[RMDB]
RNA sequence: GGGAACGACUCGAGUAGAGUCGAAAAGUUCCCGAAGCGCGCCGUGAUCGCUCCCUUCUUCCAGCUGACCGUCGCCAGCAUGACGUUCUUCUGUCUGAUUAACUACACCAAGUUGAAGCACCACAGGAUUCCCAACUGGUUUCGACCAGUUGGGAAUAAAAGAAACAACAACAACAAC
Reactivity to DMS in 0.01 (KOAc 150mM, MgCl2 10mM, bicine 150mM(pH8.5), 24C), signal-to-noise 2, nucleotides 027 to 126: g000u010u000c010c000c000g010a050a080g010c030g030c050g000c030c040g000u000g000a060u000c080g010c040u010c010c020c000u000u010c020u000u010c060c030a090g000c050u000g020a050c030c030g030u010c040g040c090c040a070g000c050a080u050g000a050c090g020u000u000c010u000u000c030u010g010u000c020u020g030a170u020u010a060a070c040u000a130c090a090c090c030a060a060g010u000u010g000a120a140g020c060a060c030c040a050c140a090g000g000
Reactivity to 2A3 in 0.01 (KOAc 150mM, MgCl2 10mM, bicine 150mM(pH8.5), 24C), signal-to-noise 3, nucleotides 027 to 126: g020u010u000c000c000c020g020a030a020g080c030g000c000g000c030c020g090u060g020a110u060c020g030c020u040c010c000c000u100u050c000u070u000c030c020a010g000c000u060g030a050c000c010g020u020c020g020c040c000a000g000c000a030u110g020a010c020g040u050u090c000u070u030c050u030g080u020c030u040g060a070u120u040a080a050c020u040a040c060a040c040c010a050a020g000u010u030g040a050a010g050c010a010c070c000a010c010a030g050g100